[RMDB]
RNA sequence: GGGAACGACUCGAGUAGAGUCGAAAAAUGAGUCGACAGACGAGGCGAAUGGGCAUAUCGCUGGAUGCCUCCAAUGUGUACGAAAUGGACCCAUGGAAAGACGACCGGUGCAGAGACUUCAUUGCACGCUCCAUGACGCUUUCGAGCGUCAUGGAGCAAAAGAAACAACAACAACAAC
Reactivity to 2A3 in 0.01 (KOAc 150mM, MgCl2 10mM, bicine 150mM(pH8.5), 24C), signal-to-noise 2, nucleotides 027 to 126: a000u080g000a020g040u040c060g000a000c010a000g030a000c010g030a010g000g000c000g070a140a240u280g060g030g050c010a000u060a000u300c050g000c020u000g010g000a020u170g060c000c060u030c000c000a000a140u040g000u000g000u000a110c000g030a030a030a030u040g070g000a010c000c060c040a030u070g070g070a050a050a000g000a000c000g000a040c040c080g000g010u020g000c060a060g000a090g060a030c000u040u020c130a110u080u150g000c060a010c100